[RMDB]
RNA sequence: GGGAACGACUCGAGUAGAGUCGAAAAUGGGCUACCCGUAAGCGAAAAAUGAUACAGGACGAAAAAAACAUAAUUCGAGAUUUUUCAGGAUGGAUUUUUUUAGGUAUCUAUCAAAACUAUUCUGAUGCAACGUAGAGCACGUUCGCGUGCUCUACAACGAUGAUUCAUCGUUCGCGAUGAAUCAUCGAAAAGAAACAACAACAACAAC
Reactivity to 2A3 in 0.01 (KOAc 150mM, MgCl2 10mM, bicine 150mM(pH8.5), 24C), signal-to-noise 1, nucleotides 027 to 156: u090g040g030g000c020u030a070c000c000c000g040u070a030a040g020c010g060a040a020a070a010a000u170g020a040u090a130c060a060g080g030a010c010g040a120a010a010a010a000a030a010c070a040u110a090a100u120u030c000g000a000g040a250u060u070u040u100u100c000a010g000g000a010u000g020g030a030u020u020u000u000u020u000u050a040g030g000u250a070u120c020u020a020u020c040a000a000a000a000c010u010a010u030u020c010u000g000a030u020g030c020a040a030c060g010u000a000g000a010g000c000a020c000g000u010u060c210g030c030g040u010g000c000u000c000u010a000c000a000a000
Conditions: 150 mM KOAc, 10 mM MgCl2 and 150 mM bicine (pH 8.5), 24 C.
Chemical mapping of a 207-nucleotide RNA with 2A3.
It was measured as part of the RMDB library M2RFOK.
Values cover nucleotides 27 to 156.